[RMDB]
RNA sequence: GGGAACGACUCGAGUAGAGUCGAAAAUCUCGCCGAACUCGGAGAUCAGCUUGCCGUCCUCGCUGUAGACCUUGAGGGGGAUCUGCAGCUGGACGUUACGCAGAGCUUCCACCGAGGGCAGGCUGGGUCGUGCAGAGGUGUUCGCACCUCUGCACGAAAAAGAAACAACAACAACAAC
Reactivity to 2A3 in 0.01 (KOAc 150mM, MgCl2 10mM, bicine 150mM(pH8.5), 24C), signal-to-noise 2, nucleotides 027 to 126: u000c020u000c030g000c010c010g000a040a030c000u000c000g040g000a040g010a100u090c070a000g010c000u000u020g000c010c010g000u000c000c000u020c150g000c010u010g000u010a020g000a000c000c000u030u120g130a300g110g130g000g000g040a250u000c000u010g000c000a000g010c000u000g000g010a000c000g010u060u060a030c050g000c010a020g040a030g150c000u030u000c000c040a090c010c010g020a000g050g020g010c080a030g030g000c020u080g040g030g040
Reactivity to DMS in 0.01 (KOAc 150mM, MgCl2 10mM, bicine 150mM(pH8.5), 24C), signal-to-noise 1, nucleotides 027 to 126: u120c020u000c210g110c060c000g000a300a160c000u000c010g040g010a120g000a070u070c060a040g000c000u000u010g000c000c020g000u000c000c000u000c160g050c000u030g240u090a000g000a060c010c000u000u010g000a190g000g010g000g000g000a070u000c000u010g000c000a000g030c000u000g000g030a000c040g000u020u020a130c300g040c010a110g000a010g000c000u000u000c040c020a080c000c000g000a030g000g000g000c040a280g000g000c030u010g010g010g010
About this RNA
Structure probing data (2A3 and DMS) for a 177-nucleotide construct. In probing experiments dimethyl sulfate is read out at A N1 and C N3, which are open when not base-paired. Conditions: 150 mM KOAc, 10 mM MgCl2 and 150 mM bicine (pH 8.5), 24 C. Reactivities are given for positions 27 through 126. For DMS the reverse transcriptase was MarathonRT. Source: RMDB library RFM100, as collected in RNAgym.